[RMDB]
RNA sequence: GGGAACGACUCGAGUAGAGUCGAAAAUGGACUUAUUACAGUUCCUACUUAUCCGGUUUUAACGCUGUUUUAUUGGCGCAAAGGUUUACGGAUAAACAACUAAUAAUUAAACCUUUUGUGUGCGAAAAUUGGACGUUUAGGUUCGCCUAAACGUCAAGUAUUACUGUCUCUUCGGAGACAGUAAUACAAAAGAAACAACAACAACAAC
Reactivity to DMS in 0.01 (KOAc 150mM, MgCl2 10mM, bicine 150mM(pH8.5), 24C), signal-to-noise 2, nucleotides 027 to 156: u000g010g010a030c020u000u000a110u000u010a090c130a240g000u010u000c010c030u000a090c070u010u000a000u000c010c000g030g000u000u000u000u040a270a060c020g060c040u020g010u000u010u000u010a100u030u000g050g030c000g020c000a000a040a040g050g020u000u000u000a130c000g000g000a040u020a000a090a150c030a060a120c070u000a100a130u010a070a190u010u000a010a020a020c000c000u000u000u000u000g010u010g000u000g020c030g010a080a050a140a250u010u010g020g000a030c000g030u000u000u000a000g030g000u000u030c300g040c030c000u010a000a000a000c010g010u000c000a010a050
Reactivity to 2A3 in 0.01 (KOAc 150mM, MgCl2 10mM, bicine 150mM(pH8.5), 24C), signal-to-noise 5, nucleotides 027 to 156: u100g030g010a020c040u070u090a060u150u200a300c130a070g020u080u060c000c000u020a050c030u060u030a010u000c010c000g000g040u010u000u010u040a060a040c040g010c030u030g150u100u090u110u170a130u130u240g030g000c000g020c020a010a010a030g000g000u000u010u000a000c000g000g000a010u050a050a070a010c050a020a010c040u160a060a080u140a170a020u170u130a020a010a000c000c000u010u020u080u120g060u010g010u040g040c120g090a060a050a080a170u150u140g100g000a000c000g000u000u000u000a020g000g040u040u050c180g090c010c000u000a010a010a010c000g000u000c000a000a000
Conditions: 150 mM KOAc, 10 mM MgCl2 and 150 mM bicine (pH 8.5), 24 C. An RNA of 207 nucleotides, treated with DMS and 2A3 and read out base by base. The 2A3 profile rests on 2,926 reads.